Structure probing data (2A3 and DMS) for a 207-nucleotide construct. It was measured as part of the RMDB library OK3TST.

RNA sequence: GGGAACGACUCGAGUAGAGUCGAAAAGCAUUAUUUGAUUUAAUCUUCAUAAUGCCAUUGAGUGGUGUUAGCCCAUUUUACAGAUGAGAAACUGCUGGCUCAAAGAGAUGAGGGAAAUCAGUGGAGGGCACAAAGCUAGUCAGUGAUAAGAGGCAGGAGUGUUAGGUACAUUCGUGUACCUAACACUAAAAGAAACAACAACAACAAC
Reactivity to 2A3 in 0.01 (KOAc 150mM, MgCl2 10mM, bicine 150mM(pH8.5), 24C), signal-to-noise 5, nucleotides 027 to 156: g020c010a000u010u050a050u060u110u080g070a090u070u130u230a150a130u100c050u080u010c030a010u020a050a010u030g000c020c020a040u060u150g070a040g030u060g000g000u050g010u110u090a050g000c010c010c020a020u050u070u080u090a100c070a040g070a060u070g020a040g050a110a080a010c040u060g010c030u020g040g000c010u040c070a080a100a020g060a030g010a030u090g010a060g000g010g040a030a030a050u090c030a020g020u040g050g060a050g000g010g000c050a020c060a040a060a000g030c010u010a020g060u080c030a020g000u010g060a020u040a170a040g010a020g050g000c040a010g040g090
Reactivity to DMS in 0.01 (KOAc 150mM, MgCl2 10mM, bicine 150mM(pH8.5), 24C), signal-to-noise 2, nucleotides 027 to 156: g020c010a010u000u010a010u000u000u000g010a090u020u010u000a090a200u020c100u000u000c070a070u010a030a030u000g000c040c020a170u000u010g040a100g050u010g010g050u010g020u000u010a170g020c020c010c000a150u010u000u010u000a240c060a100g020a130u010g010a100g000a100a060a070c050u000g000c030u000g010g000c040u000c030a020a150a170g010a170g020a060u000g000a110g000g030g010a070a070a060u000c040a070g020u000g010g010a100g010g000g040c060a020c010a030a060a110g000c020u000a060g030u000c030a060g000u010g000a090u010a090a100g010a050g020g000c020a080g000g020
The RNA was probed in 150 mM KOAc, 10 mM MgCl2 and 150 mM bicine (pH 8.5) at 24 C.